An RNA of 177 nucleotides, treated with DMS and read out base by base. Values are in units of 0.01, from 0 to 300, in steps of 10. DMS adducts were read by reverse transcription with MarathonRT. It was measured as part of the RMDB library TTRINS.

RNA sequence: GGGAACGACUCGAGUAGAGUCGAAAAGAUAUGGAGUUAUACCUUAGACAUACUCGCGAUAAGCUGGGUGUCGGAAACGACACCGACCAGCUUUUGACGCGAGUGUCUAAGGUAUAACUCCUAAGUCCAGUAGAUCGUGGUUCGCCACGAUCUACUGAAAAGAAACAACAACAACAAC
Reactivity to DMS in 0.01 (KOAc 150mM, MgCl2 10mM, bicine 150mM(pH8.5), 24C), signal-to-noise 1, nucleotides 027 to 126: g010a040u010a300u000g000g010a010g010u000u000a020u000a010c010c000u010u000a000g010a040c010a090u010a140c020u010c000g030c020g020a120u000a010a020g010c000u030g000g010g010u040g000u000c020g030g000a100a040a230c010g020a030c000a000c020c210g030a300c300c010a000g000c000u000u000u000u010g030a270c050g000c010g020a030g040u000g000u000c000u020a000a000g010g030u000a000u000a000a000c010u000c000c010u000a010a060g000u000c060